[RMDB]
RNA sequence: GGGAACGACUCGAGUAGAGUCGAAAAGAGGUCGACCAACGAGCUUAGAUUUGGGAAGACCUAUAAUUUACUCUAAGUCAGUUAAUGUGCUUCGAGAAGCACGUUACUGACUUUAGGGCUAGCUCGAACUCACUUACGGGUUCGCCCGUAAGUGAGUAAAAGAAACAACAACAACAAC
Reactivity to 2A3 in 0.01 (KOAc 150mM, MgCl2 10mM, bicine 150mM(pH8.5), 24C), signal-to-noise 2, nucleotides 027 to 126: g100a050g000g000u040c000g000a050c000c000a050a050c020g000a010g030c000u060u110a010g030a290u080u070u070g000g000g000a130a000g010a000c000c000u000a010u000a000a000u010u100u120a020c010u000c000u010a000a000g000u000c000a000g000u060u090a000a000u000g010u000g010c000u020u080c070g080a030g060a070a020g000c000a000c010g000u000u000a000c000u000g000a000c000u000u010u020a000g000g010g000c000u020a000g000c000u000c000g030a060
Reactivity to DMS in 0.01 (KOAc 150mM, MgCl2 10mM, bicine 150mM(pH8.5), 24C), signal-to-noise 1, nucleotides 027 to 126: g040a010g000g000u010c000g020a300c000c000a060a060c060g000a050g000c000u080u040a040g000a210u000u000u000g000g010g010a130a120g000a000c000c020u000a090u010a050a110u010u040u040a220c000u000c000u000a000a050g000u000c000a010g000u030u000a000a010u000g000u000g000c000u000u000c300g040a090g020a020a000g000c000a000c000g000u000u000a020c000u000g000a000c000u000u010u050a010g020g000g030c120u010a010g000c000u000c000g010a240
Chemical mapping of a 177-nucleotide RNA with 2A3 and DMS. For 2A3, 2,276 sequencing reads were counted. The RNA was probed in 150 mM KOAc, 10 mM MgCl2 and 150 mM bicine (pH 8.5) at 24 C. For DMS, 2,264 sequencing reads were counted. DMS adducts were read by reverse transcription with MarathonRT.